Chemical mapping of a 207-nucleotide RNA with 2A3.

RNA sequence: GGGAACGACUCGAGUAGAGUCGAAAAGAAAGAAAGAACCCUUCCCGCGGGGCUGGAUCUUCCAGAUGGUGCGGGCCGGGACAAGCUGGAGAGUGUCCCGGUUUCAGAAACAACCUUCGGCAGCCAAACUAGACUACCCACUUCGGUGGGUAGUCAACUCAACUGUUUUGUUCGCAAAACAGUUGAGAAAAGAAACAACAACAACAAC
Reactivity to 2A3 in 0.01 (KOAc 150mM, MgCl2 10mM, bicine 150mM(pH8.5), 24C), signal-to-noise 1, nucleotides 027 to 156: g020a000a010a010g030a010a070a010g030a120a190c020c000c000u000u010c000c010c010g000c030g000g030g020g010c000u000g000g030a110u140c080u180u010c110c000a000g000a030u010g040g130u050g000c020g000g000g000c010c000g000g010g000a000c000a000a000g010c020u010g030g010a010g010a010g020u000g010u010c020c000c000g000g000u000u000u020c020a010g020a010a030a010c050a030a010c010c000u010u010c010g030g020c050a040g100c020c100a080a050a070c060u090a080g000a000c000u000a000c000c000c000a020c000u020u030c140g110g000u010g000g000g000u000a000g000u000c000a000a000
The RNA was probed in 150 mM KOAc, 10 mM MgCl2 and 150 mM bicine (pH 8.5) at 24 C.